[RMDB]
An RNA of 177 nucleotides, treated with 2A3 and read out base by base.
The 2A3 profile rests on 299 reads.
For 2A3 the reverse transcriptase was SuperScript II with manganese.
The RNA was probed in 150 mM KOAc, 10 mM MgCl2 and 150 mM bicine (pH 8.5) at 24 C.

RNA sequence: GGGAACGACUCGAGUAGAGUCGAAAAUCGUUGAAAGAGCUUGGAGAAAUGGUAUCAACUGGUCCAAUUUCAAAAUCAGGUGUAAAUCACCGAUUAAGAAAACUUAAUGAUUUAGCCGAUAAGAUUAUCGUUACGUCUCGUUCGCGAGACGUAACGAAAAAGAAACAACAACAACAAC
Reactivity to 2A3 in 0.01 (KOAc 150mM, MgCl2 10mM, bicine 150mM(pH8.5), 24C), signal-to-noise 1, nucleotides 027 to 126: u000c000g000u100u120g110a110a110a110g060a050g080c020u020u000g000g000a140g030a110a140a000u110g000g050u120a030u080c120a020a050c000u130g070g030u010c000c000a000a160u000u000u080c000a000a000a170a000u000c120a100g020g000u000g070u110a140a260a120u300c000a000c000c000g000a000u020u190a000a050g030a000a030a000a000c000u000u050a140a090u080g000a000u030u030u030a030g000c000c030g020a120u030a050a080g090a090u170u210a060